Structure probing data (2A3 and DMS) for a 177-nucleotide construct. For 2A3 the reverse transcriptase was SuperScript II with manganese. The reactions ran in a buffer of 150 mM KOAc, 10 mM MgCl2 and 150 mM bicine (pH 8.5), at 24 C. The data come from the RNA Mapping Database (RMDB), library OK2TST. Values cover nucleotides 27 to 126.
[RMDB]
RNA sequence: GGGAACGACUCGAGUAGAGUCGAAAAUGAUGGGUGGUGCGCGCGAUCAGCUUGAUGUCAACGUCGGCCCGCUUGAGCUUCUUUGCCGCGUUUAGCCCGCCGAACCCAGAUCCGAUGAUCACAACUCCAACUGUUUCCGGUUCGCCGGAAACAGUUGAAAAGAAACAACAACAACAAC
Reactivity to 2A3 in 0.01 (KOAc 150mM, MgCl2 10mM, bicine 150mM(pH8.5), 24C), signal-to-noise 1, nucleotides 027 to 126: u140g100a030u110g000g000g040u050g080g150u140g030c000g000c020g000c010g000a030u050c050a000g040c020u040u050g040a080u130g040u110c090a120a010c060g060u090c020g140g000c040c010c000g000c000u020u040g020a010g040c000u110u010c000u060u160u130g070c110c030g030c060g000u000u010u160a030g000c000c040c000g000c030c010g070a070a080c040c030c000a010g010a020u060c040c070g130a140u250g010a010u060c040a060c020a130a140c040u090c130
Reactivity to DMS in 0.01 (KOAc 150mM, MgCl2 10mM, bicine 150mM(pH8.5), 24C), signal-to-noise 1, nucleotides 027 to 126: u000g010a070u010g000g000g010u010g000g020u000g020c000g030c090g060c050g020a070u030c090a040g040c070u000u000g020a070u020g000u010c190a040a030c110g060u000c030g040g020c030c060c050g030c070u030u000g000a090g000c030u000u000c050u010u000u000g020c020c030g030c070g000u000u010u020a300g020c000c000c000g030c030c030g000a050a200c040c000c020a170g020a060u000c020c120g000a210u010g000a050u000c040a150c200a060a070c150u040c110